[RMDB]
RNA sequence: GGGAACGACUCGAGUAGAGUCGAAAAUCGAUCGCAGCUUGUUGAUGAGAACCAUGGCGAGCGAACGAAUCGCGAAAAGCCAUGAUUAAGUGCAUGGAAUCAUCGACGCCGAUUCCCAACACGGCGCCAACCUAUCAUCAUUCGUGAUGAUAGGUUGAAAAGAAACAACAACAACAAC
Reactivity to 2A3 in 0.01 (KOAc 150mM, MgCl2 10mM, bicine 150mM(pH8.5), 24C), signal-to-noise 9, nucleotides 027 to 126: u040c010g020a020u060c030g000c060a050g030c050u120u220g020u030u030g080a040u020g010a020g030a100a040c030c010a010u010g000g000c020g020a050g050c010g000a050a030c080g110a170a170u040c010g000c020g060a060a070a060a060g020c020c020a030u030g000a040u100u130a140a050g070u070g140c040a070u060g040g040a030a040u020c010a010u020c020g020a020c010g010c020c000g010a020u050u000c000c010c000a010a020c080a010c030g040g010c020g010c030
Reactivity to DMS in 0.01 (KOAc 150mM, MgCl2 10mM, bicine 150mM(pH8.5), 24C), signal-to-noise 9, nucleotides 027 to 126: u010c080g010a090u010c060g020c070a190g010c040u000u010g020u000u000g010a030u010g010a130g000a100a130c060c010a010u000g000g010c010g010a160g020c010g000a030a180c210g010a110a150u000c020g010c040g000a080a070a110a200g000c020c030a010u010g000a050u000u000a050a090g010u010g000c090a070u010g000g000a110a120u000c040a030u000c040g000a060c010g020c040c010g000a090u000u000c000c000c010a090a100c170a110c100g000g000c020g000c150